[RMDB]
RNA sequence: GGGAACGACUCGAGUAGAGUCGAAAAUACCUGUCCUGCUCACAAGGGGAUAGUAAAAAGGCAGUCUUUCCAAUCCAUUACUCUCAUAGGCUAUCCCUUAGGUAAUAAAGGAGGGAGAGGAACUCCAAAAUUUACUACGUUUCGACGUAGUAAAUUUAAAAGAAACAACAACAACAAC
Reactivity to 2A3 in 0.01 (KOAc 150mM, MgCl2 10mM, bicine 150mM(pH8.5), 24C), signal-to-noise 3, nucleotides 027 to 126: u060a000c010c010u010g090u000c000c010u040g070c040u050c040a140c020a100a030g020g010g010g010a020u010a000g060u080a040a100a090a060a050g070g000c040a010g060u040c050u050u050u000c020c020a070a080u050c030c020a080u050u130a100c020u050c000u000c060a110u120a100g130g000c010u020a020u030c020c030c010u000u010a040g000g010u060a070a080u110a160a230a010g060g020a030g000g020g010a030g010a020g020g020a010a030c030u040c030c000a050
Reactivity to DMS in 0.01 (KOAc 150mM, MgCl2 10mM, bicine 150mM(pH8.5), 24C), signal-to-noise 6, nucleotides 027 to 126: u020a110c040c010u010g000u000c010c010u000g010c080u000c130a100c140a140a110g000g000g010g010a010u000a020g000u000a020a090a070a180a090g000g010c110a040g000u000c060u010u000u000c020c030a090a120u000c080c070a090u000u000a100c070u010c030u000c060a110u000a110g010g010c020u000a030u000c030c000c010u000u000a060g020g000u010a050a090u020a070a100a080g010g000a100g010g010g010a040g000a090g020g000a080a090c070u000c020c020a070
Structure probing data (2A3 and DMS) for a 177-nucleotide construct. Source: RMDB library OK2TST, as collected in RNAgym. For 2A3 the reverse transcriptase was SuperScript II with manganese. The reactions ran in a buffer of 150 mM KOAc, 10 mM MgCl2 and 150 mM bicine (pH 8.5), at 24 C. For DMS the reverse transcriptase was MarathonRT.